Annotation: This 177-nucleotide RNA was probed chemically with 2A3 and DMS. It was measured as part of the RMDB library M2PK50.
RNA sequence: GGGAACGACUCGAGUAGAGUCGAAAACAUUGGCAUUUCGAUGCCAAUGGGUCUGCGUCGCGCGGGCGCCGAGUCGUUCCCGCGGCCGCGUGACGCAGUUUGGGCAGCUCGAGUUCGCUCGAGCUAAGUAGAGACAGUAGUUCGCUACUGUCUCUACAAAAGAAACAACAACAACAAC
Reactivity to 2A3 in 0.01 (KOAc 150mM, MgCl2 10mM, bicine 150mM(pH8.5), 24C), signal-to-noise 2, nucleotides 027 to 126: c010a000u000u000g010g000c000a010u010u060u090c250g090a000u030g010c000c000a000a000u000g010g000g010u000c000u000g010c010g000u000c000g000c000g010c010g000g030g080c020g020c070c160g120a090g050u010c000g000u020u010c000c000c000g000c020g000g010c000c000g000c010g010u000g000a000c000g000c000a000g000u000u100u010g010g040g020c050a010g000c000u000c000g000a000g010u060u080c140g010c020u010c010g000a000g000c000u020a030a000
Reactivity to DMS in 0.01 (KOAc 150mM, MgCl2 10mM, bicine 150mM(pH8.5), 24C), signal-to-noise 4, nucleotides 027 to 126: c010a010u000u000g000g010c000a000u000u000u010c190g010a030u000g000c000c000a010a000u000g000g010g010u010c000u000g000c000g020u000c000g000c000g010c010g000g000g000c010g020c020c210g000a120g010u000c000g000u000u000c000c000c010g040c000g000g000c000c000g020c020g020u000g000a020c010g010c000a000g000u000u010u000g000g000g020c190a060g000c000u000c000g010a020g010u000u010c220g010c000u000c000g000a010g000c010u000a000a080